[RMDB]
RNA sequence: GGGAACGACUCGAGUAGAGUCGAAAAUUCAGAUGCAGAACACUGGUGUUUUUCCUAGCUGCUUUCCUUAGUGGAUGAUGGCACACAUUCUAUCUUGGGAACCAAAAGGAAUUACAUUUUCCUGCCAGGAGGAGUGUUCAAGUAAAUGAGAUGGGGAACUACAGAGUGUCUUCGGACACUCUGUAGUAAAAGAAACAACAACAACAAC
Reactivity to DMS in 0.01 (KOAc 150mM, MgCl2 10mM, bicine 150mM(pH8.5), 24C), signal-to-noise 1, nucleotides 027 to 156: u000u000c020a020g000a060u010g000c020a140g030a090a180c040a060c040u020g000g010u010g020u000u000u000u000u000c000c010u000a150g060c060u020g010c080u000u000u000c030c020u020u030a080g010u000g010g000a050u000g010a100u000g020g060c130a090c030a160c060a070u000u010c020u010a070u000c040u000u010g040g020g000a060a090c170c100a030a090a130a090g030g000a010a040u000u000a090c080a080u010u000u000u000c000c010u000g000c030c000a100g000g010a180g020g010a040g050u000g000u000u030c030a030a150g020u010a040a060a060u010g020a090g000a010u000g000g030g030g000a130
Reactivity to 2A3 in 0.01 (KOAc 150mM, MgCl2 10mM, bicine 150mM(pH8.5), 24C), signal-to-noise 2, nucleotides 027 to 156: u100u030c020a010g030a100u070g050c020a000g050a110a010c020a010c040u070g040g000u010g000u000u040u040u050u000c010c010u020a050g010c070u050g010c000u070u020u020c000c000u070u090a050g010u050g070g020a030u050g020a070u060g100g050c070a010c010a000c000a090u050u000c020u120a300u070c020u030u040g040g000g010a060a060c090c000a080a050a050a010g010g020a010a010u060u030a080c020a080u040u040u050u110c010c000u010g130c080c030a060g000g020a030g010g010a000g010u000g020u020u030c030a060a040g050u050a010a130a090u150g020a140g010a030u070g020g010g000g000a000
This 207-nucleotide RNA was probed chemically with DMS and 2A3. For 2A3 the reverse transcriptase was SuperScript II with manganese. The reactions ran in a buffer of 150 mM KOAc, 10 mM MgCl2 and 150 mM bicine (pH 8.5), at 24 C. The data come from the RNA Mapping Database (RMDB), library OK3TST.